Chemical mapping of a 170-nucleotide RNA with DMS and 2A3. In probing experiments dimethyl sulfate is read out at A N1 and C N3, which are open when not base-paired. Source: RMDB library 15KLIB, as collected in RNAgym. For DMS the reverse transcriptase was MarathonRT. 2A3 adducts were read by reverse transcription with SuperScript II with manganese.
[RMDB]
RNA sequence: GGGAACGACUCGAGUAGAGUCGAAAACAGGAGGGGACUGCGGGUCCGUCGUUCCAUCCUUUUCUUACCUUGUGGCCGGCAUGGCCCCAGCCUCCUCGCUGGCGCCGGCUGGGCAACGAUCCGAGGGACACCCGUCAGUUCGCUGACGGGAAAAGAAACAACAACAACAAC
Reactivity to DMS in 0.01 (KOAc 150mM, MgCl2 10mM, bicine 150mM(pH8.5), 24C), signal-to-noise 8, nucleotides 027 to 129: c110a000g030g030a090g020g020g050g030a030c000u020g020c090g040g040g000u070c060c070g020u000c120g000u030u020c000c000a090u060c080c040u050u030u070u000c120u010u040a140c050c090u030u060g040u050g040g020c300c020g070g000c030a050u020g000g040c020c050c000c000a050g040c000c110u060c110c080u030c150g000c020u010g020g020c300g020c040c000g030g030c010u000g050g030g030c040a070a080c140g020a100u000c020c080g000a090g000g030g030a080c170a070
Reactivity to 2A3 in 0.01 (KOAc 150mM, MgCl2 10mM, bicine 150mM(pH8.5), 24C), signal-to-noise 8, nucleotides 027 to 129: c070a020g000g030a010g000g020g000g010a010c010u030g000c060g020g040g080u150c150c020g010u000c010g020u050u030c010c000a050u040c030c000u070u050u070u040c040u080u120a140c010c020u040u080g050u110g080g050c010c010g020g000c060a140u190g060g000c000c020c000c000a010g000c000c010u130c030c010u020c040g020c000u000g010g000c000g000c010c000g010g010c010u040g010g020g010c020a060a050c060g080a070u030c030c020g010a030g010g010g010a010c010a030